An RNA of 207 nucleotides, treated with 2A3 and DMS and read out base by base. Source: RMDB library RNAMAK, as collected in RNAgym. 2A3 adducts were read by reverse transcription with SuperScript II with manganese. For DMS the reverse transcriptase was MarathonRT. The reactions ran in a buffer of 150 mM KOAc, 10 mM MgCl2 and 150 mM bicine (pH 8.5), at 24 C. Values cover nucleotides 27 to 156.

[RMDB]
RNA sequence: GGGAACGACUCGAGUAGAGUCGAAAAACCUUUGUGCGUUGUCAGCGAUAAAAGUCCUGACCUAACCCAUUGGGUUAGGAGAACAGGUCGCUAUCGCUUGGAUUUACGCACUCUGGUAAAAGGUAUGCUUUUCGCGUUCGCGCGAAAAGCAUACCAACGGUAUUAUCAUCUUCGGAUGAUAAUACCGAAAAGAAACAACAACAACAAC
Reactivity to 2A3 in 0.01 (KOAc 150mM, MgCl2 10mM, bicine 150mM(pH8.5), 24C), signal-to-noise 4, nucleotides 027 to 156: a000c000c000u010u010u010g000u000g000c000g010u000u000g030u030c010a000g010c010g000a000u020a030a190a040a040g030u030c000c000u050g090a160c000c000u010a010a000c030c000c130a300u170u300g010g000g010u000u000a000g030g020a070g020a100a060c000a000g000g030u020c010g000c090u020a000u000c010g000c010u020u070g070g000a020u160u100u240a000c000g000c010a000c000u000c000u000g000g040u090a100a140a010a000g000g000u010a010u010g010c000u000u000u000u000c000g000c000g030u050u080c230g000c000g000c000g070a000a000a000a000g000c000a000u000a000c000c000a000a000
Reactivity to DMS in 0.01 (KOAc 150mM, MgCl2 10mM, bicine 150mM(pH8.5), 24C), signal-to-noise 1, nucleotides 027 to 156: a030c010c000u000u000u000g020u000g000c040g030u000u020g020u010c010a050g000c000g030a040u000a040a010a080a150g020u000c000c000u000g010a180c030c000u010a010a030c000c010c000a300u020u000g060g050g000u000u000a010g010g000a030g010a090a160c050a010g000g030u000c070g010c280u000a090u000c000g010c000u000u010g000g030a110u000u000u000a050c010g040c000a010c000u010c010u000g000g000u000a040a040a110a070g020g020u000a020u000g010c000u000u020u000u040c040g100c010g040u000u000c300g010c030g000c010g080a010a000a000a000g010c000a010u000a000c000c000a030a030